[RMDB]
RNA sequence: GGGAACGACUCGAGUAGAGUCGAAAACACAUGGUAUUCAAGCUCAGUACGUCCAUGACCCCCGACAUCAUGCACAUACAGCACGAGUACGGCCUCUAUGGAGACCAGCGGGGCAUGGAGAUCGUCGCUAUCACCUUCGGUUCGCCGAAGGUGAUAGAAAAGAAACAACAACAACAAC
Reactivity to 2A3 in 0.01 (KOAc 150mM, MgCl2 10mM, bicine 150mM(pH8.5), 24C), signal-to-noise 3, nucleotides 027 to 126: c090a010c010a080u090g060g060u170a130u130u180c070a120a020g030c030u050c130a030g040u150a030c080g100u000c010c000a080u080g200a300c010c000c020c010c000g040a030c020a200u030c010a000u040g000c040a040c010a090u230a150c060a100g000c030a010c040g000a000g020u040a020c060g000g000c010c010u020c010u060a110u270g190g000a030g000a010c030c000a010g030c080g040g010g000g000c000a010u020g030g000a020g000a030u080c030g020u030c000g010
Reactivity to DMS in 0.01 (KOAc 150mM, MgCl2 10mM, bicine 150mM(pH8.5), 24C), signal-to-noise 3, nucleotides 027 to 126: c110a090c170a080u000g010g000u000a060u000u000c060a120a100g000c060u000c100a090g010u000a030c050g010u000c000c010a010u000g010a200c060c000c010c020c020g040a050c110a080u000c000a050u000g000c030a110c300a130u020a130c240a090g010c000a010c030g000a070g020u020a110c200g000g030c010c010u000c000u000a100u020g040g000a030g020a010c010c010a160g010c120g010g000g000g010c000a010u000g000g000a040g000a070u020c040g000u010c100g000
Structure probing data (2A3 and DMS) for a 177-nucleotide construct.
For DMS, 2,007 sequencing reads were counted.
The data come from the RNA Mapping Database (RMDB), library OK2TST.